Notes: Structure probing data (2A3) for a 207-nucleotide construct.
[RMDB]
RNA sequence: GGGAACGACUCGAGUAGAGUCGAAAACACAGCUUCAGAAUCUUUCUCAACACAGUACCCCAAGCAGCUACUACCAAUUGAUCCGAGUUGUCAAGAAGCUGAAAUCUCUUUGCCAUCUCUCUUCUAAAAAACAGUUCAAGGCUGGGCACGGUGGCUACGGACUAUUAGUCUUCGGACUAAUAGUCCGAAAAGAAACAACAACAACAAC
Reactivity to 2A3 in 0.01 (KOAc 150mM, MgCl2 10mM, bicine 150mM(pH8.5), 24C), signal-to-noise 1, nucleotides 027 to 156: c020a000c010a000g000c030u000u000c000a040g070a080a100u040c040u020u180u000c120u050c070a090a040c070a040c040a170g020u130a130c040c000c000c000a020a000g000c010a020g020c010u070a080c010u030a070c040c170a090a180u060u200g040a030u120c070c020g010a020g070u020u080g030u060c020a070a070g020a000a000g020c000u010g040a040a110a090u040c040u000c000u050u110u170g070c050c000a030u010c040u000c000u000c040u160u070c110u230a070a050a010a030a070a070c030a050g010u030u110c070a140a000g070g020c000u070g010g060g000c070a010c040g040g020u010g000g010c020u000a020

2A3 adducts were read by reverse transcription with SuperScript II with manganese. The data come from the RNA Mapping Database (RMDB), library OK3TST. The RNA was probed in 150 mM KOAc, 10 mM MgCl2 and 150 mM bicine (pH 8.5) at 24 C.